[RMDB]
RNA sequence: GGGAACGACUCGAGUAGAGUCGAAAAGAUAUGGAUAAAUCAUGCGGGAGCAAUAUGUCGGAAACGACAUAAUUGCAUCGAUCGCAUGAGUUUAUCCUAAGUCAAAAGUUCAGUGUUCGCACUGAACGUGAAACAUAAACUUCGGUUUAUGUUUCACAAAAGAAACAACAACAACAAC
Reactivity to DMS in 0.01 (KOAc 150mM, MgCl2 10mM, bicine 150mM(pH8.5), 24C), signal-to-noise 9, nucleotides 027 to 126: g010a040u000a300u010g010g010a010u000a010a010a030u000c000a010u000g010c010g020g010g000a040g020c000a010a010u000a010u000g010u000c000g010g000a130a070a270c010g020a010c000a010u000a020a040u000u000g010c000a300u000c230g000a070u010c010g010c000a010u000g000a030g010u010u000u000a010u000c000c000u010a030a100g000u000c050a090a080a110a150g010u000u000c000a010g030u000g020u000u010c270g020c010a010c000u000g000a010a010c010
Reactivity to 2A3 in 0.01 (KOAc 150mM, MgCl2 10mM, bicine 150mM(pH8.5), 24C), signal-to-noise 7, nucleotides 027 to 126: g020a010u090a030u170g010g000a010u010a020a030a010u020c010a000u010g000c000g030g070g040a080g010c010a000a010u010a000u010g010u000c010g000g020a090a050a070c020g020a000c010a000u060a060a300u040u010g000c010a100u140c040g040a080u140c020g000c010a000u000g010a010g010u010u010u000a000u000c000c000u010a100a010g050u010c040a090a040a050a170g010u000u010c000a000g000u000g060u090u170c300g070c090a000c000u000g000a000a000c020